Background: Source: RMDB library OK2TRN, as collected in RNAgym. Structure probing data (DMS and 2A3) for a 177-nucleotide construct. For DMS the reverse transcriptase was MarathonRT.
[RMDB]
RNA sequence: GGGAACGACUCGAGUAGAGUCGAAAAGCCAUUGUGCCUGACGAGUUAUGUAUUGCGGUUUGGUCACCGGAAUUAGAUCAUGCCGGGAACUCUCUGGCCGGAACGGCUGCCUUAGAGCUACUGGCACACGCGUUAGUAUUUUCGAAUACUAACGCGUAAAAGAAACAACAACAACAAC
Reactivity to DMS in 0.01 (KOAc 150mM, MgCl2 10mM, bicine 150mM(pH8.5), 24C), signal-to-noise 5, nucleotides 027 to 126: g020c010c010a100u010u000g010u010g000c010c020u010g010a080c130g010a050g000u000u000a070u010g020u010a100u010u000g010c030g020g010u000u000u000g010g010u000c060a170c100c080g020g000a060a090u010u000a080g010a030u010c090a070u000g010c000c010g020g000g010a030a090c020u000c010u000c030u000g000g010c000c070g010g000a090a130c230g010g020c060u000g010c010c020u000u000a050g010a050g020c030u010a140c040u000g000g010c020a090c230
Reactivity to 2A3 in 0.01 (KOAc 150mM, MgCl2 10mM, bicine 150mM(pH8.5), 24C), signal-to-noise 4, nucleotides 027 to 126: g020c000c010a060u060u160g090u140g010c010c010u030g030a050c060g010a040g080u160u060a140u200g180u080a150u160u200g160c030g000g030u020u050u110g030g000u040c020a030c090c010g090g130a130a150u160u060a130g020a100u080c010a010u100g000c000c000g030g010g040a010a020c000u000c010u000c020u010g020g010c010c010g000g040a140a140c100g120g000c020u010g000c000c000u060u070a080g010a010g030c040u060a060c070u080g000g000c020a020c020
The reactions ran in a buffer of 150 mM KOAc, 10 mM MgCl2 and 150 mM bicine (pH 8.5), at 24 C.